[RMDB]
The record gives the reactivity of an RNA of 207 nucleotides to 2A3.
Conditions: 150 mM KOAc, 10 mM MgCl2 and 150 mM bicine (pH 8.5), 24 C.
RNA sequence: GGGAACGACUCGAGUAGAGUCGAAAACGCUCGGCACCCGUGGCUGCUCGCGCAGGCAACCCGCAUCGCCGCGGCGCGCCGCUACGGCUGCCUGACGACCGGCGACGCGUUCGCCGCCGAACGUGAGCUCGCCGCACGGUUCGCGGUGCUCUGCAACGCUAUCCGGCUAGUUCGCUAGCCGGAUAGCAAAAGAAACAACAACAACAAC
Reactivity to 2A3 in 0.01 (KOAc 150mM, MgCl2 10mM, bicine 150mM(pH8.5), 24C), signal-to-noise 1, nucleotides 027 to 156: c040g030c090u000c020g000g020c000a020c000c020c000g020u000g000g010c000u000g020c000u010c030g010c010g000c070a160g030g000c050a090a080c030c090c100g190c100a160u050c110g000c060c000g020c030g190g010c000g020c000g000c000c000g000c000u000a000c010g000g020c030u020g010c000c000u000g030a010c000g020a030c040c070g000g060c000g000a010c030g000c070g090u070u030c000g050c000c020g000c050c050g040a080a060c030g090u060g040a030g030c040u040c050g020c000c000g030c060a100c090g050g080u150u120c070g020c040g030g030u050g000c000u010c070u060g030c030a130a140c070